[RMDB]
RNA sequence: GGGAACGACUCGAGUAGAGUCGAAAAGGGGUUCGGGUUGCCUGAGUCCAGGCCGCCAACAGGAGCACUGGCCGGGGCGGCGACGGGCGUGUUGGUCAGGCCCGAGUUGAGGACGUUCGCCAGGCCGGAGGGUCUAAGUGUUCGCACUUAGACCCUCAAAAGAAACAACAACAACAAC
Reactivity to DMS in 0.01 (KOAc 150mM, MgCl2 10mM, bicine 150mM(pH8.5), 24C), signal-to-noise 2, nucleotides 027 to 126: g000g010g010g020u000u000c090g000g000g000u010u000g040c020c020u000g000a190g000u010c050c050a140g000g050c030c030g030c050c010a140a090c190a150g040g000a070g000c070a030c080u000g000g000c070c040g000g020g000g030c010g000g000c000g010a180c030g000g010g000c020g030u000g000u000u030g010g020u000c010a120g010g010c000c010c000g010a030g000u030u000g000a090g010g000a080c030g000u000u000c040g000c000c030a300g000g010c030c070g010
Reactivity to 2A3 in 0.01 (KOAc 150mM, MgCl2 10mM, bicine 150mM(pH8.5), 24C), signal-to-noise 2, nucleotides 027 to 126: g060g000g000g000u020u060c060g000g000g050u190u030g040c000c030u110g030a080g060u060c100c000a020g000g060c000c020g040c000c000a130a040c080a120g080g020a000g070c070a050c110u050g030g000c020c000g070g030g040g030c000g010g000c000g000a080c020g000g040g000c050g000u060g020u040u130g130g010u290c030a030g010g060c030c000c000g000a020g020u120u100g040a110g050g100a030c010g000u030u080c020g050c030c030a070g020g070c040c000g000